[RMDB]
RNA sequence: GGGAACGACUCGAGUAGAGUCGAAAAAGGUUCGCUGUGGUGCAACUCUUAUUAGUAACUAAUCCAAAGCAAGUAUAGGAGAACAGGUUUUUAACUAUUUUUAGGCGGAUAAAAAAUAGUAUUUGACAAAAUCGAUUGUCGUUCGCGACAAUCGAAAGAUACAUAAAGAGUUCGCUCUUUAUGUAUCAAAAGAAACAACAACAACAAC
Reactivity to DMS in 0.01 (KOAc 150mM, MgCl2 10mM, bicine 150mM(pH8.5), 24C), signal-to-noise 1, nucleotides 027 to 156: a180g030g010u000u000c030g000c040u000g010u000g000g020u020g020c010a080a100c020u000c060u000u010a110u010u000a040g000u000a070a060c040u000a120a050u030c090c080a080a110a140g040c040a060a130g010u000a070u010a080g000g000a080g000a060a090c100a070g020g010u000u000u010u000u020a050a160c000u000a010u000u000u000u000u000a050g000g000c000g020g000a160u020a010a020a040a030a030a010u000a020g000u000a170u000u000u010g000a110c070a040a060a060a250u010c000g000a010u000u000g010u000c000g050u010u020c240g010c030g010a060c000a000a030u010c010g000a020a020a030
Reactivity to 2A3 in 0.01 (KOAc 150mM, MgCl2 10mM, bicine 150mM(pH8.5), 24C), signal-to-noise 2, nucleotides 027 to 156: a000g030g000u030u040c030g000c040u010g030u040g040g030u040g000c020a030a010c020u010c010u090u080a140u080u110a080g060u070a060a090c050u040a070a060u100c040c040a110a050a030g030c020a050a030g030u070a070u060a110g030g020a030g020a060a030c030a050g000g060u010u060u000u000u010a030a000c000u010a020u010u000u000u000u010a030g070g000c050g060g050a040u190a030a060a000a000a000a000u010a000g020u010a150u070u070u080g040a030c030a020a070a040a080u030c010g000a000u000u000g000u010c000g010u040u050c190g010c000g110a000c000a000a010u000c000g000a000a000a000
The record gives the reactivity of an RNA of 207 nucleotides to DMS and 2A3. 2A3 adducts were read by reverse transcription with SuperScript II with manganese.